[RMDB]
This 207-nucleotide RNA was probed chemically with 2A3.
The RNA was probed in 150 mM KOAc, 10 mM MgCl2 and 150 mM bicine (pH 8.5) at 24 C.
High 2A3 reactivity points to a flexible backbone, as in loops and unpaired stretches.
Values cover nucleotides 27 to 156.
The 2A3 profile rests on 1,436 reads.
RNA sequence: GGGAACGACUCGAGUAGAGUCGAAAAGGCUGUGUUGUGGCGGGGGCGACACAGGAUCGACAAGGGUGUAAAGAUCGCUCUUUUACUCGGCAUGAUACCACCGUUAUCGGGUCAACAGAGUAGUUGCUAGGGGAACGGGUGUUCGCACCCGUUCCAACCAUAUUGGCACGUUCGCGUGCCAAUAUGGAAAAGAAACAACAACAACAAC
Reactivity to 2A3 in 0.01 (KOAc 150mM, MgCl2 10mM, bicine 150mM(pH8.5), 24C), signal-to-noise 1, nucleotides 027 to 156: g080g010c010u010g020u000g000u100u000g060u070g160g030c050g000g040g000g000g010c010g010a000c010a000c010a020g020g040a100u090c000g000a010c040a050a000g000g100g020u040g030u130a090a100a020g080a070u170c030g010c010u000c060u010u090u010u090a120c040u030c010g020g000c020a030u080g000a000u030a040c010c010a030c000c020g060u060u050a050u070c040g000g000g010u020c000a010a020c070a010g160a020g040u190a030g010u030u030g040c070u090a060g060g190g000g000a000a000c000g000g000g000u000g000u000u020c080g020c060a000c000c000c000g000u000u020c000c000a000a000